[RMDB]
RNA sequence: GGGAACGACUCGAGUAGAGUCGAAAAUGCCGGCAAGUACUCCGCACUGAGCAGACUCUCGGUCUCGGGCCGCUGAGCUGCACGAGUGCCCCGGCACCACCGCUGCGUGUUGGCGCCGAAGCCGCCACCGGAGCUAGUCAUUCGUGACUAGCUCCGGAAAAGAAACAACAACAACAAC
Reactivity to 2A3 in 0.01 (KOAc 150mM, MgCl2 10mM, bicine 150mM(pH8.5), 24C), signal-to-noise 4, nucleotides 027 to 126: u050g020c010c020g000g000c080a070a030g000u020a030c020u050c080c050g070c100a110c260u140g040a040g040c020a020g100a300c000u000c000u010c000g070g000u050c120u190c270g050g070g000c000c010g030c140u020g000a000g000c000u010g010c030a020c040g030a000g000u000g030c000c020c040c000g000g000c010a000c000c020a030c000c000g070c020u080g000c040g060u080g050u100u090g020g010c020g000c010c070g180a060a000g080c100c020g000c000c000a020
Reactivity to DMS in 0.01 (KOAc 150mM, MgCl2 10mM, bicine 150mM(pH8.5), 24C), signal-to-noise 1, nucleotides 027 to 126: u020g000c000c010g000g000c000a220a210g000u000a050c070u010c040c150g000c240a030c090u000g020a230g050c050a000g000a160c000u000c000u000c150g020g000u020c060u100c140g140g020g020c020c000g020c200u000g020a000g010c000u000g010c000a210c060g010a000g020u000g000c000c100c030c000g000g000c000a030c050c060a200c000c000g010c040u060g040c010g030u010g000u000u050g000g050c020g000c020c000g000a100a110g000c130c020g000c020c000a060